[RMDB]
Conditions: 150 mM KOAc, 10 mM MgCl2 and 150 mM bicine (pH 8.5), 24 C. The record gives the reactivity of an RNA of 177 nucleotides to DMS. For DMS the reverse transcriptase was MarathonRT.
RNA sequence: GGGAACGACUCGAGUAGAGUCGAAAAGAUAUGGAGCGAGGUUGUUGCUACCCACCAGUAGAACUACCUCGAAAGUGUCGGAAACGACACUGAGAGGCUACUGAGGCAACAACCUCGCUCCUAAGUCCAUUAACUGCCUGUUCGCAGGCAGUUAAUGAAAAGAAACAACAACAACAAC
Reactivity to DMS in 0.01 (KOAc 150mM, MgCl2 10mM, bicine 150mM(pH8.5), 24C), signal-to-noise 3, nucleotides 027 to 126: g010a140u030a300u020g010g000a020g050c010g040a020g010g000u000u000g000u010u010g020c020u000a060c030c060c100a300c150c000a000g000u000a010g000a070a060c090u020a300c060c010u000c010g000a030a090a000g010u000g020u000c000g000g000a140a140a100c010g000a010c000a000c000u000g000a300g000a000g000g000c010u000a000c000u000g000a080g000g000c000a010a010c010a020a010c000c000u000c000g000c010u030c000c000u000a010a070g000u000c040